Structure probing data (DMS and 2A3) for a 207-nucleotide construct. The reactions ran in a buffer of 150 mM KOAc, 10 mM MgCl2 and 150 mM bicine (pH 8.5), at 24 C. For 2A3 the reverse transcriptase was SuperScript II with manganese. For DMS the reverse transcriptase was MarathonRT. For DMS, 2,200 sequencing reads were counted.
[RMDB]
RNA sequence: GGGAACGACUCGAGUAGAGUCGAAAACUUAUUAGUAACUAAUCCAAAGCAAGUAUAGGAGAACAGGUUUUUAACUAUUUUUAGGCCGAUAAAAAAUAGUAUUUGACAGUCUAACACUAACUGAACACCACGCUCUCUUACUUCGGUAAGAGAGCAACAACUGUCUAAUCUUCGGAUUAGACAGUUGAAAAGAAACAACAACAACAAC
Reactivity to DMS in 0.01 (KOAc 150mM, MgCl2 10mM, bicine 150mM(pH8.5), 24C), signal-to-noise 1, nucleotides 027 to 156: c090u000u000a100u010u020a150g000u000a140a100c080u000a140a120u010c030c060a000a150a140g010c040a060a100g010u010a160u000a090g020g000a100g000a030a130c040a070g020g020u000u000u000u000u000a010a120c010u000a010u010u000u010u000u000a070g010g030c010c040g020a170u020a000a000a060a020a040a000u000a000g000u000a140u000u000u010g020a110c030a030g010u000c040u000a070a110c070a090c090u010a040a050c050u020g010a060a070c020a060c090c040a040c160g010c010u010c020u000c000u010u010a010c000u010u000c230g040g000u000a000a020g000a020g010a000g020c030a030a010
Reactivity to 2A3 in 0.01 (KOAc 150mM, MgCl2 10mM, bicine 150mM(pH8.5), 24C), signal-to-noise 4, nucleotides 027 to 156: c030u130u090a040u110u130a250g070u080a130a070c050u050a090a120u040c030c040a080a040a020g040c070a050a010g030u100a100u130a170g080g050a090g030a100a070c200a300g010g000u040u000u000u020u020a020a000c000u000a010u040u010u010u020u040a070g100g090c030c040g110a080u220a010a000a000a000a000a000u000a010g020u000a070u100u060u060g080a020c000a000g020u050c050u070a080a030c050a050c150u040a140a020c040u060g060a080a020c020a020c080c010a050c100g000c000u000c000u000c000u000u000a000c000u020u030c020g020g000u000a000a000g000a000g000a000g000c000a000a000